[RMDB]
RNA sequence: GGGAACGACUCGAGUAGAGUCGAAAAAGAAAGAUCCGACAAGCAGCUGAAAGAGUCAGAUACAGUUAUUUGCACCCAACCAAUGGACAGAAGCUGCUGAUCCAUGUGGUUGACUUAGGGAAAAGCUGGAAGAAGCUGAGGAGGAACACAUGGGAGACUGACUCCUCCUAUUCGUAGGAGGAGUCAGAAAAGAAACAACAACAACAAC
Reactivity to 2A3 in 0.01 (KOAc 150mM, MgCl2 10mM, bicine 150mM(pH8.5), 24C), signal-to-noise 1, nucleotides 027 to 156: a000g050a020a050a000g080a040u010c000c030g040a040c060a040a030g000c010a030g000c060u010g010a120a120a000g050a020g040u090c000a020g010a010u070a090c020a010g030u080u040a130u160u110u110g130c000a010c010c030c000a000a040c020c000a000a000u040g000g000a000c010a010g020a070a050g090c100u180g050c010u000g080a020u010c000c010a010u030g030u060g260g000u010u000g000a010c020u060u120a100g000g000g030a000a030a030a080g020c020u030g000g020a020a000g020a010a000g040c090u060g020a000g030g010a020g020g000a060a030c020a000c010a040u050g080g010g000a060g060a030